[RMDB]
RNA sequence: GGGAACGACUCGAGUAGAGUCGAAAAGGGGUCUUUCGCGCAUUUAUCCAGUGAGCUUGGAUUUACUGAAGCCUCCACGGUUGUCAGCUCAUGUUCGGAUAUUCAACGAAAGACGGAGGCACCCAAACCAGGACUAACGUUCGCGUUAGUCCUGGAACACUAUGGAUGUCUUCGGACAUCCAUAGUGAAAAGAAACAACAACAACAAC
Reactivity to 2A3 in 0.01 (KOAc 150mM, MgCl2 10mM, bicine 150mM(pH8.5), 24C), signal-to-noise 5, nucleotides 027 to 156: g020g000g020g000u010c010u000u020u010c030g010c000g080c110a120u100u090u080a010u050c040c060a080g040u020g040a010g000c050u100u180g160g070a140u300u260u210a040c020u020g040a060a020g020c000c000u000c070c010a030c020g030g000u100u130g070u150c040a010g000c010u010c010a030u110g190u190u170c100g000g000a000u010a030u090u130c080a110a070c020g000a000a000a010g000a000c000g010g010a010g000g000c020a030c000c000c000a040a030a060c000c000a000g010g000a000c000u000a000a000c000g050u060u080c300g000c000g150u010u000a000g000u010c000c010u000g010g000a000a000
Reactivity to DMS in 0.01 (KOAc 150mM, MgCl2 10mM, bicine 150mM(pH8.5), 24C), signal-to-noise 2, nucleotides 027 to 156: g000g010g020g000u000c010u000u000u010c010g000c040g020c130a270u010u000u000a040u000c010c010a170g050u010g010a030g050c030u000u000g040g000a180u000u000u000a140c070u000g000a050a150g010c020c010u000c000c030a300c040g000g000u000u000g000u000c040a080g020c010u000c000a020u000g010u010u010c100g010g020a100u000a070u010u010c060a070a030c020g010a070a030a060g010a040c040g010g010a070g060g060c020a210c000c010c000a050a090a190c000c000a010g000g000a030c000u000a000a000c000g040u000u010c300g080c010g030u010u000a010g000u000c000c000u000g010g000a020a100